RNA sequence: GGGAACGACUCGAGUAGAGUCGAAAACUCUCCUAAAUACGUCUCUUCUGUCACUUCCCGAACUGGCAGUUCUGGAGCAAAGGAGAUGAAACUCAAGGGGGCUGAUGGUAAAACGAAGAUCGCCACACGUGUAGAAUCCUUUCGAGGAUUCUACACGAAAAGAAACAACAACAACAAC
Reactivity to 2A3 in 0.01 (KOAc 150mM, MgCl2 10mM, bicine 150mM(pH8.5), 24C), signal-to-noise 1, nucleotides 027 to 126: c000u000c010u000c010c000u120a140a080a070u150a080c050g070u020c000u030c000u050u000c010u030g040u090c050a030c140u040u020c010c050c030g010a080a020c050u040g220g030c100a030g030u080u110c030u050g070g010a020g030c030a060a010a000g010g000a010g000a000u070g050a140a070a040c100u090c120a030a130g000g030g000g030g030c050u080g050a090u060g000g070u100a130a070a040a000c040g010a030a070g020a120u030c050g010c030c000a020c000a000
Reactivity to DMS in 0.01 (KOAc 150mM, MgCl2 10mM, bicine 150mM(pH8.5), 24C), signal-to-noise 2, nucleotides 027 to 126: c200u000c050u000c040c000u000a050a070a090u000a140c080g000u010c000u000c030u000u000c000u000g030u010c120a140c110u000u000c000c000c010g010a050a040c120u000g010g020c100a090g020u000u000c010u000g000g000a030g010c010a060a100a070g000g000a050g020a030u000g000a060a120a130c090u000c100a080a090g020g000g000g000g040c080u030g010a110u000g000g020u000a030a130a090a040c150g010a100a140g040a040u000c060g000c010c030a090c160a140
Chemical mapping of a 177-nucleotide RNA with 2A3 and DMS. For DMS, 1,009 sequencing reads were counted. The data come from the RNA Mapping Database (RMDB), library OK2TRN. The RNA was probed in 150 mM KOAc, 10 mM MgCl2 and 150 mM bicine (pH 8.5) at 24 C.